[RMDB]
RNA sequence: GGGAACGACUCGAGUAGAGUCGAAAAGACCGUCAGUUAGACGGAAGAAGUGCAUAAAUCCACAACGGAAGACUAGAUAUUGCACAAAUGUGGAUAAGCGUACGGAUCUACGUGCGCUAAACGUGAGGAUAAUGAGUAUAUUCGUAUACUCAUUAUCAAAAGAAACAACAACAACAAC
Reactivity to DMS in 0.01 (KOAc 150mM, MgCl2 10mM, bicine 150mM(pH8.5), 24C), signal-to-noise 9, nucleotides 027 to 126: g010a120c010c000g020u000c000a200g020u040u040a100g010a020c000g000g010a110a090g010a080a110g010u010g010c020a050u020a060a090a050u010c010c010a080c130a080a140c230g010g010a070a080g000a150c110u010a060g010a110u020a070u010u010g000c060a050c030a070a070a090u010g020u020g000g010a080u010a080a040g000c000g010u000a000c000g000g000a130u070c230u040a090c000g010u000g000c000g010c000u000a010a040a060c150g000u030g010a100g010
Reactivity to 2A3 in 0.01 (KOAc 150mM, MgCl2 10mM, bicine 150mM(pH8.5), 24C), signal-to-noise 9, nucleotides 027 to 126: g080a010c000c000g000u000c000a050g030u100u290a070g000a000c020g090g030a010a020g100a040a010g000u060g000c040a060u080a140a180a030u020c010c010a030c020a130a070c080g090g070a070a030g030a100c030u050a030g050a120u150a130u130u190g020c040a010c010a040a080a030u140g000u030g010g030a040u040a140a030g000c000g000u010a000c010g000g040a030u020c030u110a070c050g000u010g000c000g000c000u010a000a040a000c060g060u090g080a080g120